[RMDB]
RNA sequence: GGGAACGACUCGAGUAGAGUCGAAAAGAUGUUUUUGACUGGUGGUGUCCAGGUAGAUGUGGGUGUUCUACCUUAUCAAAUUGGAAAUCAUCCUGCAAGGAUCUAAAUGAGGUUAAUCCACAGAGCCUCACUCGGAAACAUUCGUGUUUCCGAGUGAAAAAGAAACAACAACAACAAC
Reactivity to DMS in 0.01 (KOAc 150mM, MgCl2 10mM, bicine 150mM(pH8.5), 24C), signal-to-noise 1, nucleotides 027 to 126: g000a060u000g020u000u000u000u010u010g020a150c070u010g010g020u000g000g030u010g010u000c010c050a020g000g000u010a170g010a060u000g020u030g000g000g030u000g010u010u000c130u000a060c000c010u010u010a060u010c030a030a090a240u000u030g020g000a040a020a020u000c010a020u000c030c040u010g010c070a030a070g040g010a030u000c090u010a050a060a110u000g000a080g000g010u000u010a090a060u010c030c030a020c070a160g010a040g000c020c020
An RNA of 177 nucleotides, treated with DMS and read out base by base. The reactions ran in a buffer of 150 mM KOAc, 10 mM MgCl2 and 150 mM bicine (pH 8.5), at 24 C. Values cover nucleotides 27 to 126. DMS adducts were read by reverse transcription with MarathonRT. For DMS, 1,111 sequencing reads were counted. Source: RMDB library OK2TRN, as collected in RNAgym.